The record gives the reactivity of an RNA of 170 nucleotides to DMS and 2A3. The DMS profile rests on 3,349 reads. 2A3 adducts were read by reverse transcription with SuperScript II with manganese. Reactivities are given for positions 27 through 129. The 2A3 profile rests on 2,724 reads. DMS adducts were read by reverse transcription with MarathonRT.
RNA sequence: GGGAACGACUCGAGUAGAGUCGAAAAAGCUUAUUUUAGUAAGAAACAUGUAGAAGUUUUUACUGAUGGUAAGCUUAAUUGUAGUUUCCAGGACGCUGCCUCUAAUAUCUUUGUUAUUAACAAGGACUCAGCGCCUACUUCGGUAGGCGCAAAAGAAACAACAACAACAAC
Reactivity to DMS in 0.01 (KOAc 150mM, MgCl2 10mM, bicine 150mM(pH8.5), 24C), signal-to-noise 1, nucleotides 027 to 129: a000g010c000u000u000a060u040u060u030u000a080g020u040a000a080g050a000a000a000c000a060u140g000u110a190g030a120a220g040u000u000u000u000u000a010c020u000g030a000u040g010g000u030a050a000g000c000u020u020a050a130u000u000g050u010a080g040u000u000u000c030c010a090g010g030a080c130g050c000u010g010c080c060u100c120u020a020a090u080a190u030c000u000u030u000g030u000u000a040u000u000a050a030c070a060a000g000g050a000c200u010c130a070
Reactivity to 2A3 in 0.01 (KOAc 150mM, MgCl2 10mM, bicine 150mM(pH8.5), 24C), signal-to-noise 3, nucleotides 027 to 129: a000g000c000u000u000a010u000u020u020u020a000g000u050a000a060g050a120a050a010c040a030u170g090u090a070g030a300a040g030u000u000u000u000u000a000c000u000g080a060u130g030g050u000a000a020g000c000u000u040a030a050u220u100g050u070a040g070u000u000u000c010c010a000g000g000a000c010g020c050u030g000c000c000u060c070u060a100a080u070a030u140c020u000u000u000g000u080u000a190u160u120a140a010c000a010a000g040g000a010c020u010c080a000